[RMDB]
RNA sequence: GGGAACGACUCGAGUAGAGUCGAAAAGAUAUGGAUCCAUUAAGGGAGACGGCAUGUCGGAAACGACAUGACGUCUUUGAUCUUACGGUGGAUCCUAAGUCAAAAGCGCGUCUGUUCGCAGACGCGCCAGUAUGACUACCUUCGGGUAGUCAUACUGAAAAGAAACAACAACAACAAC
Reactivity to 2A3 in 0.01 (KOAc 150mM, MgCl2 10mM, bicine 150mM(pH8.5), 24C), signal-to-noise 3, nucleotides 027 to 126: g000a000u010a020u120g000g010a010u010c000c000a020u050u080a040a040g040g010g010a070g010a000c000g020g000c000a010u000g010u010c020g020g040a000a040a000c000g000a000c010a010u010g010a000c000g060u020c000u010u010u000g000a000u000c010u010u030a060c160g140g120u130g060g010a000u000c000c000u000a020a010g030u000c030a060a020a140a100g000c000g000c010g000u030c000u040g100u100u180c300g000c150a000g000a000c000g000c000g010c000
Reactivity to DMS in 0.01 (KOAc 150mM, MgCl2 10mM, bicine 150mM(pH8.5), 24C), signal-to-noise 4, nucleotides 027 to 126: g000a020u000a140u010g000g000a000u000c000c000a050u000u000a010a020g000g000g000a010g000a010c000g000g000c000a000u000g010u000c000g010g000a040a030a060c000g010a010c000a000u000g000a010c000g010u000c000u000u000u010g000a040u010c000u000u000a040c300g010g020u010g010g000a010u000c000c000u000a010a100g000u000c020a090a110a110a160g010c010g010c000g010u000c000u000g000u000u020c280g020c020a010g000a010c000g020c000g010c000